[RMDB]
RNA sequence: GGGAACGACUCGAGUAGAGUCGAAAAUCGCAAAAGCCGGCCCACAGCGUAUCAGAGAGAUUUGUGCGAAGAUUUUGGAGGUUUUCGCUCCAAGCUCGUCGGAAUCGGACCACGACCGUAUCGCUUAUCGAGUAAUAGGAUUCGUCCUAUUACUCGAAAAAGAAACAACAACAACAAC
Reactivity to 2A3 in 0.01 (KOAc 150mM, MgCl2 10mM, bicine 150mM(pH8.5), 24C), signal-to-noise 4, nucleotides 027 to 126: u060c010g000c020a050a030a010a120g070c050c020g040g040c000c020c000a040c040a010g050c010g020u030a030u170c060a010g060a010g000a010g020a150u040u040u090g060u050g010c020g020a060a020g030a090u100u130u100u210g110g010a110g030g030u060u020u100u170c090g020c010u000c010c000a000a020g030c000u010c020g040u020c020g020g030a040a040u060c010g010g020a030c030c010a040c050g060a030c000c030g040u060a050u130c040g000c100u060u080a070
Reactivity to DMS in 0.01 (KOAc 150mM, MgCl2 10mM, bicine 150mM(pH8.5), 24C), signal-to-noise 8, nucleotides 027 to 126: u000c060g020c080a070a070a110a140g020c050c030g010g010c040c010c030a080c110a080g010c020g020u000a060u010c070a080g010a110g000a110g000a070u000u000u000g000u000g010c000g000a070a060g010a060u000u000u000u010g010g010a060g010g000u000u010u000u010c110g000c000u000c030c030a020a040g010c050u000c020g000u000c050g000g000a050a060u000c050g010g000a130c080c050a050c070g000a070c050c050g000u000a090u010c090g010c060u000u000a150
The data come from the RNA Mapping Database (RMDB), library OK2TRN. The record gives the reactivity of an RNA of 177 nucleotides to 2A3 and DMS. 2A3 is a SHAPE reagent: it acylates the 2'-hydroxyl of flexible nucleotides of all four kinds. The 2A3 profile rests on 7,756 reads. DMS (dimethyl sulfate) methylates the pairing face of unpaired adenines and cytosines.